[RMDB]
RNA sequence: GGGAACGACUCGAGUAGAGUCGAAAAUCUGCAUCAUACUUUUGCAAGAUAGGUAAGGAACAGAAGUGUUGCAUGUGCAAUAGACGCGCUGCAGCGUACUCUUCACCUCUGCAAUCUUAUGCCUGCUCGUGGUGUCUAACUUCGGUUAGACACCACGAAAAGAAACAACAACAACAAC
Reactivity to 2A3 in 0.01 (KOAc 150mM, MgCl2 10mM, bicine 150mM(pH8.5), 24C), signal-to-noise 1, nucleotides 027 to 126: u000c020u040g010c010a020u030c000a010u070a050c010u060u050u020u040g000c040a150a060g000a230u090a060g030g000u050a030a100g010g050a070a030c040a090g110a150a080g060u000g000u030u000g000c010a080u290g000u010g060c000a010a080u070a190g070a140c060g040c000g000c010u030g000c010a000g010c000g020u060a080c020u040c000u050u030c060a020c000c020u000c010u000g000c000a010a010u000c020u040u010a010u010g000c020c000u010g000c000u020